[RMDB]
RNA sequence: GGGAACGACUCGAGUAGAGUCGAAAAGAUAUGGAGGUCCCAUACGAGCACAGCGGGAGAAAUUGUAUGGUCGGAAACGACCAUACAAUUUCAGCUGUGAACUACUCGUUUGGGACCUCCUAAGUCAGUUUAAUCCUAUCUUCGGAUAGGAUUAAACAAAAGAAACAACAACAACAAC
Reactivity to DMS in 0.01 (KOAc 150mM, MgCl2 10mM, bicine 150mM(pH8.5), 24C), signal-to-noise 3, nucleotides 027 to 126: g010a070u010a300u010g000g010a030g000g020u000c010c010c000a010u000a010c020g000a000g020c010a000c000a020g020c010g010g020g040a220g000a000a020a000u000u000g000u000a000u000g010g000u010c000g010g010a110a110a190c010g000a020c000c000a000u000a000c000a010a000u000u000u000c030a100g000c020u000g000u000g000a030a010c050u010a300c020u000c020g000u000u000u010g020g010g020a010c000c000u000c000c000u010a020a060g020u010c040a160